[RMDB]
RNA sequence: GGGAACGACUCGAGUAGAGUCGAAAAUCCUUCCUCUCCCUGUCGGUGAAGUCUCCCGCACGAGUCCUCUUCCUAGGUCCGGAGUCGAUCUCCAUCUGAUCCGUCCGGGCCCUCUUCGUCGGGGGAGCUACAAAUGUAUCUUCGGAUACAUUUGUAGAAAAGAAACAACAACAACAAC
Reactivity to 2A3 in 0.01 (KOAc 150mM, MgCl2 10mM, bicine 150mM(pH8.5), 24C), signal-to-noise 2, nucleotides 027 to 126: u020c000c000u020u090c010c010u030c020u010c000c000c000u020g070u090c030g040g030u050g060a060a020g030u000c010u020c000c020c020g040c020a060c020g010a010g040u010c010c020u040c020u020u010c010c000u020a040g020g000u000c010c000g000g030a010g080u190c050g020a000u000c010u030c070c020a160u060c070u110g010a000u000c010c050g030u000c000c000g010g000g020c000c000c000u020c000u030u020c000g050u000c000g000g030g010g010g000a010g020
Reactivity to DMS in 0.01 (KOAc 150mM, MgCl2 10mM, bicine 150mM(pH8.5), 24C), signal-to-noise 5, nucleotides 027 to 126: u010c020c020u010u000c020c010u000c020u000c010c010c020u000g010u000c030g010g010u000g010a080a100g000u010c060u000c010c010c020g000c170a160c030g000a050g000u000c020c040u000c040u000u000c010c020u010a070g020g010u000c000c010g000g000a040g010u010c150g000a010u000c000u000c140c210a110u010c160u010g010a020u000c020c100g000u000c010c000g020g010g000c010c010c050u000c020u000u000c030g010u000c040g000g000g010g000g010a040g010
Annotation
This 177-nucleotide RNA was probed chemically with 2A3 and DMS. For DMS, 7,035 sequencing reads were counted. Source: RMDB library 15KREP, as collected in RNAgym. For DMS the reverse transcriptase was MarathonRT. Reactivities are given for positions 27 through 126.